[RMDB]
RNA sequence: GGGAACGACUCGAGUAGAGUCGAAAAGGAGAUCGAAGACGACCGACGUCAGCACGGUCUGGAUGUAGGUCCGCAUGCAUCCCAGUUGACGAAACUUCACGAUUUCCAAAGCGGACAAGAAGUCAAACAUGAUCAGGAGUUUCGACUCCUGAUCAUGAAAAGAAACAACAACAACAAC
Reactivity to 2A3 in 0.01 (KOAc 150mM, MgCl2 10mM, bicine 150mM(pH8.5), 24C), signal-to-noise 4, nucleotides 027 to 126: g010g000a010g000a010u010c010g040a060a030g100a090c110g030a030c010c050g080a070c030g070u100c060a020g020c100a010c100g060g060u030c100u060g010g000a000u000g000u010a000g050g000u000c000c000g000c010a010u000g000c000a000u000c010c010c010a010g010u020u030g020a050c070g040a100a030a060c020u010u020c040a020c110g050a040u000u000u000c000c010a060a020a000g010c000g000g020a000c010a000a040g130a050a020g070u100c060a030a030a040
Reactivity to DMS in 0.01 (KOAc 150mM, MgCl2 10mM, bicine 150mM(pH8.5), 24C), signal-to-noise 4, nucleotides 027 to 126: g020g020a000g030a110u000c000g000a080a230g010a130c080g000a030c010c010g000a150c040g030u020c120a060g040c060a140c070g000g010u000c010u000g010g010a020u000g040u010a050g010g000u010c000c000g000c020a070u000g000c000a020u000c010c020c250a140g010u000u000g000a300c050g000a060a060a060c070u000u000c040a130c130g000a100u000u000u000c000c000a030a100a100g030c000g000g000a010c020a150a080g010a080a090g010u020c100a070a070a180